[RMDB]
RNA sequence: GGGAACGACUCGAGUAGAGUCGAAAAUCCGCCUCCCCAGGGUCCCGAGUGAGGCUUAUCCCGGGGAACUCGGCCCAGUCCCGAGAUAGCCGCGUCCGAGGUUCCCAUUCAAAGGGGAGAGGGGGGGAACCGGCUUAGUUCGCUAAGCCGAAAAGAAACAACAACAACAAC
Reactivity to DMS in 0.01 (KOAc 150mM, MgCl2 10mM, bicine 150mM(pH8.5), 24C), signal-to-noise 8, nucleotides 027 to 129: u000c030c020g030c080c010u030c020c020c000c010a100g040g000g030u000c000c000c000g000a080g040u040g020a090g010g010c020u020u050a010u010c040c020c010g020g000g030g010a060a030c020u030c130g000g040c050c030c000a160g020u010c030c000c020g010a060g010a000u000a000g000c010c030g030c060g040u040c060c020g030a140g000g030u030u020c020c000c010a090u040u050c190a020a100a080g040g010g000g010a030g000a100g010g000g010g000g010g020g020a050a020c090
Reactivity to 2A3 in 0.01 (KOAc 150mM, MgCl2 10mM, bicine 150mM(pH8.5), 24C), signal-to-noise 9, nucleotides 027 to 129: u010c000c000g040c020c000u010c010c010c000c010a050g060g050g020u050c000c000c010g020a050g050u090g040a050g010g000c020u060u110a050u030c010c000c010g000g000g000g020a030a020c030u050c080g080g000c000c010c010a020g040u040c000c000c010g010a020g000a020u020a000g010c010c030g020c030g060u030c010c010g010a100g050g000u090u100c020c000c010a020u150u130c060a030a080a040g020g000g010g000a020g020a030g020g000g000g010g000g000g010a020a040c030